[RMDB]
RNA sequence: GGGAACGACUCGAGUAGAGUCGAAAAGGGUUACCCUUCGGGGUAACCCAUACCUCCUGGCGCUGCGGCGCCGGCCCCGCCGGGAAGGCCGCCUUUACCUCCUAAAGGAAUCAUUCGUGAUUCCUAAGAUUACUGAGAUAUUCGUAUCUCAGUAAUCAAAAGAAACAACAACAACAAC
Reactivity to 2A3 in 0.01 (KOAc 150mM, MgCl2 10mM, bicine 150mM(pH8.5), 24C), signal-to-noise 4, nucleotides 027 to 126: g000g000g000u030u040a000c010c010c010u030u070c270g020g000g000g000u000a000a010c000c010c000a000u010a000c000c000u010c000c000u020g000g000c010g010c050u080g030c100g140g000c030g030c030c010g010g000c010c010c010c000g000c010c010g030g000g020a020a010g060g000c040c020g050c020c000u090u170u160a140c030c010u060c010c020u140a250a160a010g000g000a000a000u000c000a010u030u110c160g070u030g000a000u010u010c000c000u000a020a010
Reactivity to DMS in 0.01 (KOAc 150mM, MgCl2 10mM, bicine 150mM(pH8.5), 24C), signal-to-noise 5, nucleotides 027 to 126: g010g000g010u000u000a010c010c000c000u000u020c180g020g010g010g000u010a000a010c000c000c000a010u000a030c060c020u000c060c010u000g030g020c010g020c080u010g030c130g030g020c010g030c060c050g010g010c030c020c030c060g020c090c060g010g000g010a070a060g010g010c050c060g000c030c050u000u000u000a120c070c040u000c020c020u000a070a110a060g000g010a010a000u000c000a040u000u020c200g020u000g000a020u000u000c000c000u000a030a050